[RMDB]
RNA sequence: GGGAACGACUCGAGUAGAGUCGAAAAUGACUGUGCGUUCGCGCACAGUCAAAAAAAGAUAUGGAUGUAAUCUGACGGGAGCCUUCUCGGAAACGAGAAAGCGAGGAUCGUCUUACAUCCUAAGUCAAAAACUCUCGUUACUUCGGUAACGAGAGAACUGAAAAGAAUUGUUCGCAAUUCUUUUCAGAAAAGAAACAACAACAACAAC
Reactivity to DMS in 0.01 (KOAc 150mM, MgCl2 10mM, bicine 150mM(pH8.5), 24C), signal-to-noise 1, nucleotides 027 to 156: u000g000a000c010u010g050u000g030c000g030u000u010c300g020c040g040c020a030c010a010g000u000c000a010a000a040a100a040a080a100g000a030u000a160u010g000g010a030u010g020u000a000a040u010c130u010g010a010c000g010g000g000a260g040c000c000u000u000c010u000c000g010g030a130a050a140c000g000a010g000a020a010a000g050c000g020a100g040g020a050u010c000g020u000c000u000u000a010c000a000u000c000c010u010a000a110g000u010c020a030a090a130a020a160c010u000c000u020c010g020u000u010a010c000u000u010c300g050g000u000a000a020c000g010a020g010a010g010a000a040
Reactivity to 2A3 in 0.01 (KOAc 150mM, MgCl2 10mM, bicine 150mM(pH8.5), 24C), signal-to-noise 3, nucleotides 027 to 156: u080g000a000c000u010g000u000g010c020g050u040u090c300g010c010g010c130a000c000a000g000u020c020a000a000a000a000a000a020a020g040a030u040a030u110g010g000a000u010g010u010a020a050u180c270u300g010a010c020g170g080g040a000g000c000c000u000u010c000u000c000g000g020a040a040a020c010g010a000g020a000a000a000g010c020g020a040g070g070a110u210c010g000u000c000u000u000a000c010a000u000c000c000u000a030a000g010u000c030a020a030a100a100a180c000u000c010u010c000g000u000u000a000c000u020u040c190g110g000u010a000a000c000g000a000g000a000g000a020a010
This 207-nucleotide RNA was probed chemically with DMS and 2A3. 2A3 adducts were read by reverse transcription with SuperScript II with manganese. Source: RMDB library RNAMAK, as collected in RNAgym. The DMS profile rests on 2,705 reads. Conditions: 150 mM KOAc, 10 mM MgCl2 and 150 mM bicine (pH 8.5), 24 C.